Conditions: 150 mM KOAc, 10 mM MgCl2 and 150 mM bicine (pH 8.5), 24 C. The record gives the reactivity of an RNA of 177 nucleotides to DMS and 2A3. The DMS profile rests on 2,562 reads. Source: RMDB library TTRINS, as collected in RNAgym.
RNA sequence: GGGAACGACUCGAGUAGAGUCGAAAAGAUAUGGAAGGAAUCGCUACUUCAUCGAUCAACCUUCCACGUUUCGGAAACGAAACGUGGAAGGUUGGGAGAAGUAGACCCGAUGAACCUUCCUAAGUCACAAUCAUACACACUUCGGUGUGUAUGAUUGAAAAGAAACAACAACAACAAC
Reactivity to DMS in 0.01 (KOAc 150mM, MgCl2 10mM, bicine 150mM(pH8.5), 24C), signal-to-noise 3, nucleotides 027 to 126: g010a030u000a300u000g010g000a000a000g030g020a120a020u000c010g010c010u000a010c000u000u000c000a300u010c270g010a100u020c000a000a000c000c000u000u010c020c000a020c000g010u010u000u000c000g010g010a120a070a210c000g020a010a000a000c000g030u000g000g010a010a000g010g000u000u000g010g010g010a030g010a020a020g000u010a000g000a090c300c280c120g000a010u010g010a200a080c000c000u000u000c010c000u000a020a060g000u010c060a220
Reactivity to 2A3 in 0.01 (KOAc 150mM, MgCl2 10mM, bicine 150mM(pH8.5), 24C), signal-to-noise 1, nucleotides 027 to 126: g030a020u100a090u290g010g000a000a000g000g020a090a000u030c000g040c030u020a020c020u050u030c000a300u300c080g180a140u140c020a000a000c000c000u000u050c050c020a000c000g000u010u050u000c000g030g020a000a160a140c040g000a010a000a000c060g020u020g000g000a030a000g020g030u000u000g000g000g000a010g010a020a000g000u000a010g070a160c140c090c000g000a010u050g110a060a140c000c010u010u000c000c000u000a280a060g060u040c010a020
DMS adducts were read by reverse transcription with MarathonRT. Reactivities are given for positions 27 through 126. For 2A3 the reverse transcriptase was SuperScript II with manganese.